[RMDB]
RNA sequence: GGGAACGACUCGAGUAGAGUCGAAAAGCGGGACCAGUGGCUGAAGUGGCAUGAGCGCUACUCCAACAUCCUCUCCCCACAGCUGGAGCAGGAGGACCUGGCGGUGGUGGUGGCGGUGGAACGCGCGGGCAUUGACUGUGUUCGCACAGUCAAUGCCAAAAGAAACAACAACAACAAC
Reactivity to 2A3 in 0.01 (KOAc 150mM, MgCl2 10mM, bicine 150mM(pH8.5), 24C), signal-to-noise 1, nucleotides 027 to 126: g050c040g000g040g010a010c040c040a020g030u070g110g000c040u020g090a130a000g010u030g060g000c050a050u150g110a020g090c130g040c040u040a030c010u000c030c000a040a050c010a120u020c020c000u050c010u000c000c000c020c030a170c020a050g000c040u070g020g000a020g000c100a030g050g070a040g010g020a030c020c010u060g040g000c040g050g010u050g000g030u100g010g000u100g030g010c070g010g090u040g000g020a060a010c020g030c000g010c080g070
Reactivity to DMS in 0.01 (KOAc 150mM, MgCl2 10mM, bicine 150mM(pH8.5), 24C), signal-to-noise 1, nucleotides 027 to 126: g010c050g020g000g000a110c020c110a030g000u000g010g010c050u010g030a020a050g000u010g030g000c020a050u010g000a120g000c150g000c000u000a140c060u010c000c020a060a100c120a160u000c000c030u000c060u000c030c000c010c100a020c080a060g000c070u020g000g000a070g000c100a060g030g000a040g040g000a220c210c000u000g000g020c030g000g020u010g010g040u000g020g030u000g010g000c170g000g030u000g020g030a060a100c060g000c050g010c070g040